[RMDB]
RNA sequence: GGGAACGACUCGAGUAGAGUCGAAAAUCUGGGUCCUGGCGGCUCAGGGGGCUUGAUCUUACAUUCAACCACCACUUUGUCGAUCACUUUGCGAAGGAGAGAAUUAAAAGCCUCCCAUGCUUCAGCCCUUCCCUGUUACGUUCGCGUAACAGGGAAGAAAAGAAACAACAACAACAAC
Reactivity to DMS in 0.01 (KOAc 150mM, MgCl2 10mM, bicine 150mM(pH8.5), 24C), signal-to-noise 2, nucleotides 027 to 126: u020c040u000g020g000g000u010c010c000u020g000g020c060g010g030c030u020c200a110g010g000g010g020g020c050u030u000g020a010u060c070u000u000a120c240a080u010u060c070a050a130c120c050a060c050c050a130c070u000u020u020g000u010c070g000a100u000c090a080c080u000u010u010g010c000g010a130a090g000g010a190g000a280g010a020a050u020u010a050a080a010a060g000c060c000u020c000c000c070a060u000g000c050u000u010c040a060g040c240c060
Reactivity to 2A3 in 0.01 (KOAc 150mM, MgCl2 10mM, bicine 150mM(pH8.5), 24C), signal-to-noise 5, nucleotides 027 to 126: u090c020u060g040g050g040u050c020c020u040g060g030c100g030g010c010u030c090a040g000g020g010g000g010c020u030u070g040a060u100c050u060u120a050c050a130u050u110c040a100a070c020c060a060c020c000a090c060u040u070u100g070u070c040g040a100u040c020a050c190u070u120u150g020c070g020a070a030g040g040a070g010a010g020a070a070u060u150a140a160a010a000g000c000c000u020c000c000c000a040u090g010c010u080u060c020a030g020c000c000

Conditions: 150 mM KOAc, 10 mM MgCl2 and 150 mM bicine (pH 8.5), 24 C. This 177-nucleotide RNA was probed chemically with DMS and 2A3. It was measured as part of the RMDB library OK1LIB. DMS adducts were read by reverse transcription with MarathonRT. 2A3 adducts were read by reverse transcription with SuperScript II with manganese.